[RMDB]
Background:
An RNA of 177 nucleotides, treated with DMS and 2A3 and read out base by base. For DMS the reverse transcriptase was MarathonRT.
RNA sequence: GGGAACGACUCGAGUAGAGUCGAAAAAAACUUACACAUUCAUGAGAUGCACUGUGUUUAUUAGGAUGUACAUGUGUCCCUAAGAAUCUGAGAGCUCCUGAGAGACAGAGACGGUGUCUUACUCAUCCGCUCAGAGAAAAUUCGUUUUCUCUGAGCGAAAAGAAACAACAACAACAAC
Reactivity to DMS in 0.01 (KOAc 150mM, MgCl2 10mM, bicine 150mM(pH8.5), 24C), signal-to-noise 2, nucleotides 027 to 126: a080a060a060c110u020u010a130c070a060c060a080u000u000c050a090u000g020a050g010a060u000g000c020a040c100u010g010u020g000u000u010u000a080u010u000a060g000g000a100u010g020u000a060c060a070u000g010u010g000u000c040c000c010u000a050a110g000a120a060u010c070u000g000a300g010a080g010c050u000c030c070u000g010a090g000a090g020a090c030a070g000a120g000a070c060g000g010u000g000u000c070u000u000a120c030u000c020a060u010c120
Reactivity to 2A3 in 0.01 (KOAc 150mM, MgCl2 10mM, bicine 150mM(pH8.5), 24C), signal-to-noise 2, nucleotides 027 to 126: a000a000a000c050u070u110a040c110a010c000a060u160u190c010a020u050g040a000g010a080u040g000c010a040c090u050g000u020g030u170u100u050a130u030u040a060g010g000a080u100g080u150a050c090a110u100g070u060g030u070c000c020c000u020a110a000g050a070a060u070c050u100g060a080g020a010g290c020u000c010c090u140g090a150g000a000g010a100c020a020g100a040g020a060c000g020g020u010g020u000c000u000u010a110c020u020c000a070u030c020